[RMDB]
RNA sequence: GGGAACGACUCGAGUAGAGUCGAAAAAAUUACUAUCAGAAAGAGAACUGUCUGAACAAAUGAAUGUGAGUAGAACUUCCAUAAGGGAAGCUAUUAGGGUAUUAGAGACUAUGGGAGUGAUAGAAAGCGUAAUGGGUACUUUCGAGUACCCAUUACGAAAAGAAACAACAACAACAAC
Reactivity to DMS in 0.01 (KOAc 150mM, MgCl2 10mM, bicine 150mM(pH8.5), 24C), signal-to-noise 3, nucleotides 027 to 126: a060a060u010u000a070c090u030a100u010c020a010g020a070a020a060g000a150g000a060a110c050u000g000u020c010u020g020a060a050c220a090a070a070u030g000a140a110u050g000u000g000a110g010u010a010g100a160a040c060u000u000c000c020a040u000a090a060g000g010g000a090a030g000c020u000a010u000u020a070g060g020g000u010a080u030u010a030g010a110g020a080c010u010a020u000g000g000g000a060g030u000g000a070u030a050g020a100a090a090g000
Reactivity to 2A3 in 0.01 (KOAc 150mM, MgCl2 10mM, bicine 150mM(pH8.5), 24C), signal-to-noise 3, nucleotides 027 to 126: a000a000u300u160a100c050u020a040u050c000a050g040a070a080a000g090a020g010a080a030c050u060g000u030c030u080g040a010a050c040a030a030a090u200g160a090a020u190g040u130g130a030g010u040a000g010a150a020c010u020u000c010c010a000u060a120a060g050g010g060a080a050g010c020u050a080u240u160a030g050g000g020u030a060u040u030a000g030a000g050a050c010u000a030u050g000g020g000a030g040u060g000a000u050a150g280a070a030a010g070